[RMDB]
RNA sequence: GGGAACGACUCGAGUAGAGUCGAAAAGAGAUAGUGUUUUCACCAGAUCUUGAAGGUAUGGAUGAGGGUAUACAGAGUGAGUAUAUUCAGAUUCUACUUUAAAACAAAUACUUUCCUCUGUUGUAGUGGAGUUGAGCUAUACAUCCAACAAUAAUGACACUGUACACUUCUUCGGAAGUGUACAGUGAAAAGAAACAACAACAACAAC
Reactivity to DMS in 0.01 (KOAc 150mM, MgCl2 10mM, bicine 150mM(pH8.5), 24C), signal-to-noise 2, nucleotides 027 to 156: g040a100g000a110u010a010g010u010g010u000u000u010u030c020a130c000c050a060g010a160u000c090u000u000g020a150a100g000g020u000a020u010g010g000a060u020g000a300g000g000g020u000a060u000a040c000a100g000a070g020u010g000a160g050u000a050u000a140u000u000c050a130g030a140u000u000c030u010a050c100u000u000u000a050a080a040a110c080a030a050a070u000a040c040u000u000u010c300c000u000c020u000g020u000u000g000u010a090g050u000g000g010a120g020u000u010g000a100g020c080u000a170u000a010c030a110u010c060c030a080a110c020a100a100u000a090a100u010g000a300
Reactivity to 2A3 in 0.01 (KOAc 150mM, MgCl2 10mM, bicine 150mM(pH8.5), 24C), signal-to-noise 2, nucleotides 027 to 156: g050a000g020a040u060a050g060u050g020u000u070u180u130c110a100c060c020a000g030a080u030c030u030u150g050a050a040g030g020u060a080u170g040g000a010u010g030a040g030g000g040u030a010u020a070c000a010g060a020g120u090g060a020g030u000a010u000a000u030u090c040a050g060a150u110u040c030u020a120c050u100u190u180a090a130a030a040c060a000a140a000u060a020c000u020u080u040c030c020u000c010u020g060u080u150g080u090a150g030u050g040g020a000g050u110u040g030a010g020c020u010a030u000a080c010a010u050c090c000a060a070c040a030a110u240a190a030u120g020a010
An RNA of 207 nucleotides, treated with DMS and 2A3 and read out base by base. Values cover nucleotides 27 to 156. It was measured as part of the RMDB library OK3TST. For 2A3 the reverse transcriptase was SuperScript II with manganese. The reactions ran in a buffer of 150 mM KOAc, 10 mM MgCl2 and 150 mM bicine (pH 8.5), at 24 C.